[RMDB]
RNA sequence: GGGAACGACUCGAGUAGAGUCGAAAAGAAUAUAAGAGCGCAGUAAUUGUGAGAGCAAACUGCGCCCGGACUGUAGGAUCCGGUGGCACAGCAACGCUCAAUCACAACACGCUGUGCCACUUGAAGAAUCACCUGGGCCAUUCGUGGCCCAGGUGAUAAAAGAAACAACAACAACAAC
Reactivity to 2A3 in 0.01 (KOAc 150mM, MgCl2 10mM, bicine 150mM(pH8.5), 24C), signal-to-noise 1, nucleotides 027 to 126: g000a050a040u070a010u120a140a090g020a080g020c000g000c020a000g010u090a130a300u020u000g000u040g070a040g000a000g000c000a000a010a060c000u000g000c000g030c000c050c000g000g010a080c040u160g000u130a050g100g050a130u000c000c000g000g020u000g000g000c000a000c010a000g010c020a060a000c010g070c000u030c140a090a190u160c040a060c130a020a140c070a030c110g000c000u000g000u000g000c000c000a000c000u040u080g000a070a060g060a070
An RNA of 177 nucleotides, treated with 2A3 and read out base by base. The reactions ran in a buffer of 150 mM KOAc, 10 mM MgCl2 and 150 mM bicine (pH 8.5), at 24 C.